[RMDB]
RNA sequence: GGGAACGACUCGAGUAGAGUCGAAAAAUACAGCGUAAUCGAGCGGAGGAUAACGGCACUCCGAAAAUCCGGUACGAUUAUGAUCCCACUGCGUCGACGCUAGAUGCAGAACCGGAUUGCCGAGGAAACGAUUCAGUAGAUUCGUCUACUGAAUCGUAAAAGAAACAACAACAACAAC
Reactivity to 2A3 in 0.01 (KOAc 150mM, MgCl2 10mM, bicine 150mM(pH8.5), 24C), signal-to-noise 6, nucleotides 027 to 126: a000u170a040c080a040g020c020g070u110a070a090u100c060g040a040g150c010g000g010a020g070g020a120u080a260a040c010g020g000c030a010c040u030c010c010g020a050a020a000a010u000c010c000g020g030u070a060c080g020a030u110u110a080u210g090a050u040c010c020c010a020c010u010g000c010g010u000c010g050a100c090g020c240u080a030g010a040u010g000c000a000g030a040a020c000c000g010g010a020u020u040g000c020c010g030a040g040g080a050a230
Reactivity to DMS in 0.01 (KOAc 150mM, MgCl2 10mM, bicine 150mM(pH8.5), 24C), signal-to-noise 6, nucleotides 027 to 126: a080u010a130c180a100g010c020g030u020a060a070u000c040g000a150g000c010g000g000a030g010g010a110u000a100a130c050g010g020c040a080c070u000c000c000g010a040a050a030a030u000c000c000g010g000u000a130c110g000a070u000u010a050u010g000a100u010c000c000c010a300c020u000g000c010g020u000c010g010a140c190g010c180u010a090g000a030u000g010c000a010g010a110a070c040c010g010g000a030u000u000g010c030c030g000a100g000g000a060a100